[RMDB]
RNA sequence: GGGAACGACUCGAGUAGAGUCGAAAAGCGUACUACACCCAUUGUAGCUCGACGAUCUAUACCGCUCGUGGCUUGUCCCAAAUAGGACAAGCGGCGUAUAGGGAGAGCUACAAAUGGGUGUAUCGCAAAGGUGAACUUUCUUCGGAAAGUUCACCAACAAUGUCCGCCAGUUCGCUGGCGGACAUUGAAAAGAAACAACAACAACAAC
Reactivity to 2A3 in 0.01 (KOAc 150mM, MgCl2 10mM, bicine 150mM(pH8.5), 24C), signal-to-noise 1, nucleotides 027 to 156: g000c000g030u070a090c010u000a000c060a000c000c000c000a000u000u000g000u000a010g000c000u030c000g300a300c000g010a080u000c000u000a000u000a010c150c170g020c040u140c150g300u140g250g000c000u010u000g000u040c020c000c000a230a200a210u300a020g000g000a010c020a000a000g030c000g000g040c000g020u000a000u000a020g000g000g000a020g000a000g000c000u010a000c000a000a020a000u030g000g010g010u000g010u040a000u000c000g000c000a060a060a000g000g000u000g010a000a010c000u070u000u000c050u090u180c300g070g000a000a000a000g000u000u000c000a000c000c000a010a010

Chemical mapping of a 207-nucleotide RNA with 2A3. The RNA was probed in 150 mM KOAc, 10 mM MgCl2 and 150 mM bicine (pH 8.5) at 24 C. It was measured as part of the RMDB library RNAMAK.